The record gives the reactivity of an RNA of 177 nucleotides to 2A3 and DMS. The DMS profile rests on 1,156 reads. The data come from the RNA Mapping Database (RMDB), library OK1LIB. 2A3 adducts were read by reverse transcription with SuperScript II with manganese. High DMS reactivity at an A or C suggests that its Watson-Crick edge is free.

[RMDB]
RNA sequence: GGGAACGACUCGAGUAGAGUCGAAAAUGCAAGAUUUAGAGUAUCAAUGGAUUGACGUGACACAACAUCAGUUUAAACCGAUACGUGACGUGAGACAUACAGCAGAGACUAUUACUUCAUAUGACGAUAACCUAGGUUGCUUCGGCAACCUAGGUUAAAAAGAAACAACAACAACAAC
Reactivity to 2A3 in 0.01 (KOAc 150mM, MgCl2 10mM, bicine 150mM(pH8.5), 24C), signal-to-noise 1, nucleotides 027 to 126: u120g020c050a000a000g000a010u010u040u180a100g020a050g020u050a020u050c120a090a130u010g140g040a000u050u050g080a030c080g000u000g050a040c000a000c000a190a150c000a000u070c030a050g000u000u050u110a140a230a020c020c040g030a090u000a230c120g050u100g100a000c030g030u030g090a030g010a000c000a010u230a010c000a000g070c030a030g060a000g040a080c000u000a090u100u040a000c000u020u030c000a000u080a000u280g030a000c180g150a140
Reactivity to DMS in 0.01 (KOAc 150mM, MgCl2 10mM, bicine 150mM(pH8.5), 24C), signal-to-noise 2, nucleotides 027 to 126: u030g000c050a090a050g030a130u000u000u000a080g000a160g030u000a050u000c010a100a170u000g030g020a060u000u000g090a100c180g000u000g000a070c040a060c160a020a170c080a100u000c030a090g040u000u000u020a150a120a040c080c120g000a060u000a030c130g060u030g000a150c000g030u020g010a160g000a060c050a000u000a020c160a170g000c170a030g000a070g000a020c220u020a030u050u000a000c040u000u010c060a020u040a160u000g040a000c020g030a210